RNA sequence: GGGAACGACUCGAGUAGAGUCGAAAAUUUGAGAUCUUGAGUCACCAGGCAGUCCCAAUUUUUUUUACGAAAUAUUAGGAGUGUGCUGAUGUCAGCAUAGAUGAUGUAUUAUACAUGUUUUGUGUGGCACUAGAGUGUUGUUCGCAACACUCUAGUGAAAAGAAACAACAACAACAAC
Reactivity to DMS in 0.01 (KOAc 150mM, MgCl2 10mM, bicine 150mM(pH8.5), 24C), signal-to-noise 3, nucleotides 027 to 126: u000u010u010g010a140g010a070u010c030u000u020g000a160g000u000c010a040c020c010a030g000g000c020a040g000u000c010c010c030a020a000u000u000u000u000u000u000u000u000a130c150g000a030a020a010u010a040u000u010a070g000g000a040g010u000g010u000g000c010u010g010a080u000g010u000c030a100g010c030a040u000a030g010a030u000g000a050u000g000u000a090u010u010a120u000a030c050a040u000g010u000u000u000u010g040u000g010u000g000g030
Reactivity to 2A3 in 0.01 (KOAc 150mM, MgCl2 10mM, bicine 150mM(pH8.5), 24C), signal-to-noise 2, nucleotides 027 to 126: u110u110u100g070a060g010a020u020c000u050u030g050a020g030u010c000a000c030c000a000g010g010c000a010g110u000c000c000c000a000a000u020u020u000u000u000u000u050u120a020c030g010a060a020a020u100a010u070u120a030g030g000a030g060u010g000u020g140c000u000g010a090u040g090u090c040a020g020c020a090u070a030g080a040u130g030a010u030g070u070a060u140u140a090u070a050c030a030u050g080u050u030u070u080g050u020g020u050g110g030